[RMDB]
RNA sequence: GGGAACGACUCGAGUAGAGUCGAAAAUAUAUGCCAUACAAGUUUUAUUCCCUCCGUGAAAUCGGUAAAAAUAUAAAUAUAAAAGCACGUUCUAGUAACAAGAAAUUCUUGUGAAAGAGAGUGCUUUGCGAAGUAUAUUUUUCGAAAUAUACUUCGCAAAAGAAACAACAACAACAAC
Reactivity to 2A3 in 0.01 (KOAc 150mM, MgCl2 10mM, bicine 150mM(pH8.5), 24C), signal-to-noise 1, nucleotides 027 to 126: u190a000u010a000u040g060c000c010a040u090a190c070a050a040g030u000u040u040u110a160u150u000c000c000c000u030c030c000g050u070g160a090a040a000u080c000g000g000u010a030a110a000a030a000u280a010u100a110a110a100u200a010u090a140a100a100a000g000c000a010c040g030u120u040c000u010a000g000u000a010a000c000a040a000g060a030a230a030u280u100c000u000u000g000u000g010a000a000a000g000a000g000a000g000u030g000c060u000u010u040
An RNA of 177 nucleotides, treated with 2A3 and read out base by base.
For 2A3, 374 sequencing reads were counted.
It was measured as part of the RMDB library RFM100.